Conditions: 150 mM KOAc, 10 mM MgCl2 and 150 mM bicine (pH 8.5), 24 C. An RNA of 207 nucleotides, treated with 2A3 and read out base by base.
RNA sequence: GGGAACGACUCGAGUAGAGUCGAAAAUUCUGCGGGUUUGCCGUCGAUGCUGACAUGGGAAACCUGUCGGUGGGGCGUGCAGUAAUGGCAGGGCGAAUGCCCGUCCGCUCAUACGCUGGAGGGGAGUUUCAUCCAGCACAGCGCGAGCGGCCCGUGGCUUCACCUAAUCCUUCGGGAUUAGGUGAAGAAAAGAAACAACAACAACAAC
Reactivity to 2A3 in 0.01 (KOAc 150mM, MgCl2 10mM, bicine 150mM(pH8.5), 24C), signal-to-noise 1, nucleotides 027 to 156: u020u010c010u000g000c030g020g000g000u060u100u030g000c000c010g010u010c010g150a300u080g000c000u020g000a030c010a200u300g010g000g040a010a190a000c000c020u000g010u000c000g000g010u030g010g090g000g000c050g090u240g000c000a030g040u040a040a050u130g070g090c150a160g170g000g020c040g150a220a140u220g010c000c000c000g000u000c000c010g000c020u030c000a000u080a070c080g000c000u000g020g020a050g020g040g030g000a020g030u150u180u230c090a130u050c010c000a010g030c030a000c030a000g000c000g000c030g000a000g000c070g000g000c000c000c000g000u020g020g000
The 2A3 profile rests on 638 reads. It was measured as part of the RMDB library ARCHII.